[RMDB]
RNA sequence: GGGAACGACUCGAGUAGAGUCGAAAAUCACCAGUUUCACCGACAUCUCCAGUGCCUUCACCUACUGAAGACAUUGCAGUGGCAAGAAGGCCUAAAUCAACUUGACCGAAGGCGCUUGAGCCUGAUUGCAUACGACUAAUUUCGAUUAGUCGUAUGCAAAAGAAACAACAACAACAAC
Reactivity to 2A3 in 0.01 (KOAc 150mM, MgCl2 10mM, bicine 150mM(pH8.5), 24C), signal-to-noise 4, nucleotides 027 to 126: u060c040a050c100c000a000g010u040u040u040c040a040c030c030g080a070c030a140u010c010u000c010c000a010g000u030g050c010c010u010u010c030a070c010c030u110a050c020u020g040a120a050g170a130c050a040u040u270g010c000a020g020u010g020g000c030a010a100g000a050a000g040g010c010c000u040a030a020a000u030c010a010a050c040u080u070g070a100c040c070g060a020a000g010g000c010g000c030u030u060g020a010g010c000c030u100g010a100u000u010
Reactivity to DMS in 0.01 (KOAc 150mM, MgCl2 10mM, bicine 150mM(pH8.5), 24C), signal-to-noise 2, nucleotides 027 to 126: u000c040a080c030c000a170g080u030u000u010c000a110c000c060g100a010c110a070u040c000u030c050c030a100g000u000g000c010c030u000u000c000a280c230c040u020a010c030u000g000a040a090g060a160c300a110u070u060g040c000a020g020u010g030g000c170a100a010g000a000a240g000g070c000c060u050a010a090a000u020c010a090a140c040u040u010g000a110c090c140g030a110a070g020g000c000g030c120u000u040g030a110g000c110c040u010g000a100u030u030
Conditions: 150 mM KOAc, 10 mM MgCl2 and 150 mM bicine (pH 8.5), 24 C. An RNA of 177 nucleotides, treated with 2A3 and DMS and read out base by base. It was measured as part of the RMDB library OK1LIB. For 2A3 the reverse transcriptase was SuperScript II with manganese.